[RMDB]
RNA sequence: GGGAACGACUCGAGUAGAGUCGAAAAUAUACAUCAGAAGUCGGCACAACUCCCGACUCGCGGUGAGCGAUGCAGCGUAGCCGUUGCUACGCAGCUGCUGUGCGGAUGGCUAGCAAAAGCUAGCCUACGCUAGUAUAGCGUUCGCGCUAUACUAGCGAAAAGAAACAACAACAACAAC
Reactivity to 2A3 in 0.01 (KOAc 150mM, MgCl2 10mM, bicine 150mM(pH8.5), 24C), signal-to-noise 9, nucleotides 027 to 126: u180a010u020a030c040a050u070c040a030g060a120a020g090u020c010g020g070c130a030c040a300a300c140u050c040c000c000g010a010c000u000c020g000c040g010g030u090g030a010g010c030g110a160u140g010c020a010g000c000g010u020a000g010c070c090g170u100u300g000c000u000a000c000g000c010a010g000c010u050g000c010u030g020u060g050c020g070g020a090u070g020g000c000u000a000g000c010a110a100a300a020g010c000u000a000g000c000c000u000a020
Reactivity to DMS in 0.01 (KOAc 150mM, MgCl2 10mM, bicine 150mM(pH8.5), 24C), signal-to-noise 7, nucleotides 027 to 126: u050a100u030a130c050a050u030c030a100g020a160a030g000u000c000g020g040c240a100c120a120a150c300u030c110c000c000g000a040c040u010c020g010c300g000g020u010g000a090g010c050g010a080u010g010c020a040g010c000g000u000a030g010c000c300g010u010u040g010c000u000a010c000g020c010a030g010c030u020g000c030u000g000u010g030c050g010g010a070u020g010g010c000u000a010g000c010a130a070a080a150g000c000u000a000g000c000c000u010a020